[RMDB]
Chemical mapping of a 207-nucleotide RNA with 2A3. Source: RMDB library M2RFPK, as collected in RNAgym.
RNA sequence: GGGAACGACUCGAGUAGAGUCGAAAAAGGCACUCCAUACCCUACUCCGACUCAAUACGUCUCCGUCGUACAGAAUGGUAACAUAUCUCUCCAAAUAUCUGAGCUUGGGUAUACGGGGAAACCCAACAAAAGCAAUUGUGGUUCGCCACAAUUGCAAGAUUCCGUCCAUGUUCGCAUGGACGGAAUCAAAAGAAACAACAACAACAAC
Reactivity to 2A3 in 0.01 (KOAc 150mM, MgCl2 10mM, bicine 150mM(pH8.5), 24C), signal-to-noise 3, nucleotides 027 to 156: a010g100g000c050a030c020u010c020c010a030u060a080c010c010c010u020a040c030u000c030c040g060a050c030u020c130a080a070u090a130c050g080u050c030u020c080c050g070u050c010g000u020a030c020a070g070a080a100u060g080g000u150a150a000c040a060u160a110u060c090u000c000u000c040c020a040a130a060u140a060u020c050u060g020a010g070c070u120u080g020g000g000u050a020u020a020c030g000g000g000g000a010a050a030c000c010c000a020a030c020a020a110a000a000g010c000a000a000u000u000g000u010g020g040u060u100c140g070c060c000a000c000a000a000u000u000g020c000a000a000